[RMDB]
RNA sequence: GGGAACGACUCGAGUAGAGUCGAAAACUGGUGGUGGAAAGCAUGCUGGAGAAGUUCGUCUCUUUCAGCGUGCUUGUUAAAGACUGGGGCUUGGAAACUACGGUGGUCGAUACGUACACGGUGCGUUUCACGAUCCUGGUGAGCUUCCUGCCGCCCGCACCAUUUGCUAUUUCGAUAGCAAAUGGUGAAAAGAAACAACAACAACAAC
Reactivity to DMS in 0.01 (KOAc 150mM, MgCl2 10mM, bicine 150mM(pH8.5), 24C), signal-to-noise 1, nucleotides 027 to 156: c040u000g010g040u000g000g000u000g000g000a140a030a020g050c000a010u000g050c030u000g010g020a060g010a010a040g060u000u010c300g020u010c010u000c020u010u010u000c010a040g010c010g070u000g010c010u010u010g000u000u000a090a100a150g010a120c010u000g020g010g030g010c010u020u000g000g000a070a010a020c020u010a060c000g000g010u000g030g000u000c050g000a130u010a030c030g010u000a050c030a160c180g040g020u000g020c020g010u000u010u000c010a190c060g000a030u000c010c010u000g000g010u000g000a040g030c010u000u000c020c010u000g000c020c060g020c020c000c020g000
Reactivity to 2A3 in 0.01 (KOAc 150mM, MgCl2 10mM, bicine 150mM(pH8.5), 24C), signal-to-noise 3, nucleotides 027 to 156: c020u020g040g020u020g080g010u040g030g110a070a010a000g000c010a000u030g010c000u010g040g020a020g040a150a060g070u220u300c290g220u050c050u000c000u040u100u130c020a000g010c000g010u000g010c000u000u000g000u020u060a030a010a010g120a020c030u030g000g030g000g020c020u060u070g070g010a000a030a020c000u040a040c000g050g080u160g050g050u050c020g010a020u000a080c040g030u020a000c300a070c160g130g000u040g000c030g000u050u010u080c120a110c060g000a020u000c000c010u070g070g000u080g030a010g040c000u020u000c010c000u000g000c040c010g020c000c000c010g010